[RMDB]
RNA sequence: GGGAACGACUCGAGUAGAGUCGAAAAGGGGUCUCGGUAGCCCUUGGAUUUAGUUAUCUUUUGACGAGCUGAAGCCUCCACGGCUCGAUAAGAUAACUUGUCAGGGUGGGCCGAGACGGAGGCACCCAAAAACCUGUAGAGUUCGCUCUACAGGUAACCACUAUUCAUCGUUCGCGAUGAAUAGUGGAAAAGAAACAACAACAACAAC
Reactivity to 2A3 in 0.01 (KOAc 150mM, MgCl2 10mM, bicine 150mM(pH8.5), 24C), signal-to-noise 1, nucleotides 027 to 156: g120g010g000g010u020c030u010c000g000g010u010a010g010c010c010c000u010u150g130g000a080u210u280u210a010g000u010u000a010u000c020u040u150u090u190g200a120c030g010a000g040c000u080g020a140a040g050c020c050u030c080c010a060c010g020g000c000u000c020g030a030u030a030a000g000a000u000a010a000c050u000u050g030u040c050a020g000g000g000u000g050g300g010c010c010g000a000g000a000c020g000g020a020g000g000c040a070c000c010c050a200a070a000a000a020c000c000u000g000u000a010g010a010g020u080u170c270g040c110u000c010u000a000c000a000g000g010u000a000a020